[RMDB]
Annotation:
The record gives the reactivity of an RNA of 207 nucleotides to 2A3 and DMS.
RNA sequence: GGGAACGACUCGAGUAGAGUCGAAAAGGGUUCGGUAUCUACGUGGCUACGCAAGUCAUACCGGAGCAAGGAGUCCAAGCGCAACCCUACCUCCGCCCCUCGGUCGAACGGAUGCGGCCGUGGUUGGAUAAUCACGGGUUAGACUUGUAACGUGGCGCACAGAUAAGGAAUUCGUUCCUUAUCUGUGAAAAGAAACAACAACAACAAC
Reactivity to 2A3 in 0.01 (KOAc 150mM, MgCl2 10mM, bicine 150mM(pH8.5), 24C), signal-to-noise 5, nucleotides 027 to 156: g050g010g000u050u060c060g040g040u110a160u090c070u080a080c100g130u120g100g000c020u020a010c020g010c020a000a010g000u000c000a020u030a190c000c020g010g000a040g030c090a090a050g020g000a020g040u000c030c020a050a010g080c060g010c120a020a020c000c000c000u010a030c010c000u020c010c010g000c000c010c000c000u010c010g000g000u010c010g020a100a110c120g120g060a080u260g100c000g010g000c000c010g000u010g000g000u080u200g040g010a060u110a110a060u130c100a060c120g030g000g000u050u050a060g000a000c000u020u010g020u070a070a040c040g010u010g000g000c000g030
Reactivity to DMS in 0.01 (KOAc 150mM, MgCl2 10mM, bicine 150mM(pH8.5), 24C), signal-to-noise 3, nucleotides 027 to 156: g020g010g040u000u000c020g030g040u010a080u000c050u000a070c060g020u000g040g040c030u000a060c060g030c040a030a050g000u010c110a210u010a080c000c010g000g020a110g040c080a090a140g020g010a090g000u020c000c040a060a140g010c080g010c040a030a080c010c000c040u000a100c100c020u000c010c000g030c020c030c010c010u010c020g010g000u000c020g000a170a140c070g030g010a140u000g020c020g000g000c000c000g020u010g000g000u000u010g020g020a120u000a060a120u000c030a100c050g000g000g000u000u010a200g010a040c020u000u000g020u010a050a120c030g030u000g000g010c050g020

For 2A3, 6,141 sequencing reads were counted. 2A3 adducts were read by reverse transcription with SuperScript II with manganese. For DMS, 7,357 sequencing reads were counted. Reactivities are given for positions 27 through 156. The reactions ran in a buffer of 150 mM KOAc, 10 mM MgCl2 and 150 mM bicine (pH 8.5), at 24 C. It was measured as part of the RMDB library OK3TST. Reactivities are rounded to 0.1 and cut off at 0 and 3.